RNA sequence: GGGAACGACUCGAGUAGAGUCGAAAAUUAAAGUACGUAGAAGCGGCGUGAAGCAUGUAGAAAGCUUUGCGAGCAUAUCGAGCUACAUGUGAGCGAAAGCGGUUACGUACAAGGAUAUGCAAAAAAAGAUUGGUUUAUGGUUCGCCAUAAACCAAUCAAAAGAAACAACAACAACAAC
Reactivity to DMS in 0.01 (KOAc 150mM, MgCl2 10mM, bicine 150mM(pH8.5), 24C), signal-to-noise 3, nucleotides 027 to 126: u010u010a070a110a150g010u000a000c010g000u000a000g010a120a110g000c020g000g000c060g030u000g010a080a230g000c000a010u020g000u000a040g000a110a110a150g010c060u000u010u020g020c130g010a090g010c080a090u000a050u000c100g000a140g020c010u010a010c000a010u000g000u000g000a300g030c030g000a020a070a170g000c010g010g000u010u000a020c000g020u000a000c010a110a080g000g000a030u000a050u000g010c060a000a010a030a080a090a100a080
Reactivity to 2A3 in 0.01 (KOAc 150mM, MgCl2 10mM, bicine 150mM(pH8.5), 24C), signal-to-noise 2, nucleotides 027 to 126: u060u020a060a010a030g000u000a010c000g000u010a010g020a070a000g050c030g100g010c030g050u030g030a030a000g010c010a000u020g000u000a020g050a170a140a020g020c020u090u090u190g080c130g030a030g020c020a030u050a020u300c090g020a020g020c010u020a010c010a000u020g100u090g030a040g000c040g030a100a080a020g000c000g020g000u020u020a010c010g020u000a000c000a010a000g060g000a060u090a040u230g020c060a050a010a030a000a040a000a070

Structure probing data (DMS and 2A3) for a 177-nucleotide construct.
For 2A3, 2,985 sequencing reads were counted.
The RNA was probed in 150 mM KOAc, 10 mM MgCl2 and 150 mM bicine (pH 8.5) at 24 C.